Source: RMDB library OK2TRN, as collected in RNAgym. This 177-nucleotide RNA was probed chemically with 2A3 and DMS. The DMS profile rests on 1,331 reads. For DMS the reverse transcriptase was MarathonRT.
RNA sequence: GGGAACGACUCGAGUAGAGUCGAAAAUCAGGAUGAGCCCAAGCUGGACCGGAUCGUGCGGCUCAGCAGGAAGUUCCAGGGCCUGCAGCUGGAGCGUGAGGCCUGCCUGGCCUCCAACUACGCGCUAUCAGUGGCCAUUAUUCGUAAUGGCCACUGAAAAAGAAACAACAACAACAAC
Reactivity to 2A3 in 0.01 (KOAc 150mM, MgCl2 10mM, bicine 150mM(pH8.5), 24C), signal-to-noise 1, nucleotides 027 to 126: u050c000a000g120g000a030u150g100a080g050c000c000c000a000a000g030c000u030g020g020a070c020c000g000g180a150u220c100g140u200g160c040g000g000c000u020c030a020g000c000a000g030g130a070a010g070u120u000c040c020a010g000g060g010c000c000u060g030c030a040g020c000u030g040g040a040g030c000g020u070g060a000g000g000c010c010u000g060c040c060u040g020g000c000c010u000c020c010a040a020c020u220a060c040g080c000g000c090u060a050
Reactivity to DMS in 0.01 (KOAc 150mM, MgCl2 10mM, bicine 150mM(pH8.5), 24C), signal-to-noise 2, nucleotides 027 to 126: u010c070a080g030g000a060u010g000a120g010c010c000c050a110a130g020c030u000g000g000a060c020c030g050g010a210u010c170g010u000g000c040g010g030c020u020c020a030g010c010a050g000g000a070a150g010u010u000c060c030a130g000g010g040c040c000u000g010c040a150g000c010u000g000g000a100g000c050g010u000g010a100g000g000c010c010u000g030c050c130u000g010g020c030c000u010c020c150a030a060c130u000a050c080g000c080g000c060u010a160